[RMDB]
RNA sequence: GGGAACGACUCGAGUAGAGUCGAAAAGCGAGGAUGCGCGCGCGGACACGGCCCUAAAGAAACCUAAGACGGGGUCGCCCACCGCACCCCCGCCCGCAGAUCCAGUCCCCCUGGACACGGAGGACGACGGGUGAGUGACAUUCGUGUCACUCACCCGAAAAGAAACAACAACAACAAC
Reactivity to 2A3 in 0.01 (KOAc 150mM, MgCl2 10mM, bicine 150mM(pH8.5), 24C), signal-to-noise 1, nucleotides 027 to 126: g050c030g020a130g020g000a090u130g040c000g000c030g000c000g030c040g000g070a020c030a010c250g010g000c020c000c000u120a240a190a010g130a090a030a080c040c060u070a130a070g200a080c070g000g020g000g000u000c020g000c000c000c010a000c000c000g000c000a010c000c000c000c000c000g000c010c000c000g000c000a000g080a150u030c000c010a000g050u020c040c030c000c000c000u020g080g000a040c030a040c060g000g010a170g000g020a040c070g060a030